[RMDB]
The record gives the reactivity of an RNA of 177 nucleotides to DMS and 2A3. 2A3 adducts were read by reverse transcription with SuperScript II with manganese.
RNA sequence: GGGAACGACUCGAGUAGAGUCGAAAAGAUAUGGAACCCUGCAAACCGAGAAUUACACUACCCACCCACCUCUCGGAAACGAGAGAAGUGGAGGUGUAAUUCUCGGGACGUAUAGGGUUCCUAAGUCCGUAUCAUAUUACUUCGGUAAUAUGAUACGAAAAGAAACAACAACAACAAC
Reactivity to DMS in 0.01 (KOAc 150mM, MgCl2 10mM, bicine 150mM(pH8.5), 24C), signal-to-noise 5, nucleotides 027 to 126: g000a120u010a300u010g000g000a020a010c000c000c000u000g030c050a060a300a300c010c010g010a000g000a030a010u000u000a010c000a010c000u000a170c160c010c010a120c010c010c110a140c190c000u000c000u000c000g010g010a070a080a150c000g000a010g000a010g000a040a100g020u010g000g000a250g000g000u000g000u000a010a010u000u010c000u000c000g000g000g000a010c300g000u010a080u000a070g020g000g010u000u010c000c000u000a030a110g010u000c050
Reactivity to 2A3 in 0.01 (KOAc 150mM, MgCl2 10mM, bicine 150mM(pH8.5), 24C), signal-to-noise 3, nucleotides 027 to 126: g010a030u100a030u160g010g000a000a000c010c010c020u020g020c070a190a120a090c010c010g010a000g010a000a010u000u010a000c000a000c010u250a220c040c010c010a030c020c020c010a110c030c000u010c000u010c010g020g000a080a030a030c010g000a000g000a000g000a080a020g010u010g010g010a000g020g000u010g000u000a000a000u000u010c000u010c010g010g000g000a000c010g000u040a140u300a300g000g000g000u000u000c000c000u010a090a010g020u030c040